[RMDB]
RNA sequence: GGGAACGACUCGAGUAGAGUCGAAAAGAUAUGGAGUCAGCUUGCAAAAAGACCCAGUCGGAAACGACUGAGGUCUAAGUAUUGGCUGCUCCUAAGUCAAAGGGCGCUAAGUUCGCUUAGCGCCCAACGAUUGUGGAAAGUUCGCUUUCCACAAUCGAAAAGAAACAACAACAACAAC
Reactivity to DMS in 0.01 (KOAc 150mM, MgCl2 10mM, bicine 150mM(pH8.5), 24C), signal-to-noise 1, nucleotides 027 to 126: g000a060u010a140u000g000g010a000g020u010c010a010g020c000u010u000g010c090a080a100a100a110a010g000a010c000c010c000a010g010u000c000g020g010a050a030a070c000g020a030c000u000g010a060g000g000u000c000u000a010a080g020u020a130u000u000g000g010c000u000g000c020u010c000c030u000a000a060g010u000c010a100a140a190g020g000g010c020g040c010u000a000a010g020u000u010c220g000c010u000u000a000g000c000g000c010c000c000a000a010
Reactivity to 2A3 in 0.01 (KOAc 150mM, MgCl2 10mM, bicine 150mM(pH8.5), 24C), signal-to-noise 1, nucleotides 027 to 126: g000a020u020a010u070g000g010a000g060u230c020a000g000c040u020u110g120c110a250a010a090a160a070g000a000c000c000c000a000g000u000c000g000g010a040a000a010c010g030a000c010u030g070a110g040g010u010c000u030a020a020g010u040a080u060u120g030g000c000u010g000c010u000c000c000u020a020a000g020u010c010a050a050a190g000g000g000c040g000c010u000a010a010g020u060u070c130g060c210u000u010a000g010c000g010c000c000c000a000a000